[RMDB]
RNA sequence: GGGAACGACUCGAGUAGAGUCGAAAACGGUAUAGAAGAAAUCCACAUGUAUGAGCAAAUGUCAGAAUGCUUUUGCAUUUACGGUGACGAAUAAUGAUUGUUGAAUCAGGCCGCUCCGCAGUUUGGCAACAUGCAAAAGAGGCUGGAAUAAGUGACGGUUGUGAGACUAAUUCGUUAGUCUCACAACAAAAGAAACAACAACAACAAC
Reactivity to DMS in 0.01 (KOAc 150mM, MgCl2 10mM, bicine 150mM(pH8.5), 24C), signal-to-noise 2, nucleotides 027 to 156: c100g000g050u010a080u000a150g010a010a090g010a090a110a080u000c020c020a080c090a050u000g000u020a050u000g020a080g020c050a030a080a070u000g010u000c080a110g030a160a110u010g060c000u000u000u000u000g050c010a010u000u000u000a050c040g040g060u000g020a150c060g000a060a090u010a140a140u000g000a130u000u000g020u000u000g000a090a060u000c020a090g000g010c060c020g000c030u000c020c300g000c030a090g010u010u010u000g050g030c090a030a060c080a070u000g020c040a010a030a040a070g000a060g050g010c040u000g010g020a040a080u000a040a090g010u000g010a150c040g000
Reactivity to 2A3 in 0.01 (KOAc 150mM, MgCl2 10mM, bicine 150mM(pH8.5), 24C), signal-to-noise 3, nucleotides 027 to 156: c030g000g060u130a070u130a190g060a110a020g030a070a070a030u060c020c020a020c030a090u090g010u050a060u050g050a000g030c010a010a060a080u190g050u150c060a070g070a210a070u030g040c000u040u060u070u130g000c010a020u010u000u150a040c030g040g020u050g040a060c070g020a050a000u140a110a040u120g060a120u080u050g030u040u040g070a040a060u030c020a020g050g010c030c010g020c080u080c040c020g040c010a030g010u070u090u050g060g000c000a010a010c020a090u050g010c010a010a020a020a020g010a050g030g030c020u030g020g050a090a060u140a140a000g050u040g080a000c030g020

This 207-nucleotide RNA was probed chemically with DMS and 2A3. Reactivities are given for positions 27 through 156. The reactions ran in a buffer of 150 mM KOAc, 10 mM MgCl2 and 150 mM bicine (pH 8.5), at 24 C.